[RMDB]
RNA sequence: GGGAACGACUCGAGUAGAGUCGAAAAUUUUCUUGAGCCUGGAGGAUUCUGUUCGAUAGUUCUCAGGACCUCGGUCCUGUGUUUCUGUCGGCCUACUCACCACCCGUCAGGCCUGGCGUGAGCGAGAUACUAAGGUGGAAUUCGUUCCACCUUAGUAAAAAGAAACAACAACAACAAC
Reactivity to 2A3 in 0.01 (KOAc 150mM, MgCl2 10mM, bicine 150mM(pH8.5), 24C), signal-to-noise 3, nucleotides 027 to 126: u010u010u010u010c000u010u050g050a030g020c000c010u040g000g040a040g060g040a080u140u060c030u130g040u070u040c010g010a010u010a010g000u020u010c010u000c010a000g010g010a010c000c030u100c260g090g000u010c010c000u020g020u000g010u010u020u010c010u000g020u000c010g000g020c010c010u040a060c000u040c040a080c040c010a060c020c010c000g090u040c030a010g020g000c020c000u020g020g010c020g020u040g020a060g020c030g030a030g020a070
Reactivity to DMS in 0.01 (KOAc 150mM, MgCl2 10mM, bicine 150mM(pH8.5), 24C), signal-to-noise 9, nucleotides 027 to 126: u000u010u000u010c020u000u000g010a160g000c020c020u000g010g000a080g000g010a070u000u010c090u010g010u010u000c010g010a030u000a070g010u000u000c000u000c000a020g010g000a010c000c020u010c300g050g010u000c000c000u000g000u000g010u010u000u000c010u000g020u000c020g010g010c080c060u000a080c070u000c050a090c100c060a090c060c010c020g010u010c040a050g000g000c020c030u000g010g010c080g010u010g000a130g010c040g010a090g010a250

The record gives the reactivity of an RNA of 177 nucleotides to 2A3 and DMS. Values cover nucleotides 27 to 126. It was measured as part of the RMDB library OK2TST. Conditions: 150 mM KOAc, 10 mM MgCl2 and 150 mM bicine (pH 8.5), 24 C. 2A3 adducts were read by reverse transcription with SuperScript II with manganese.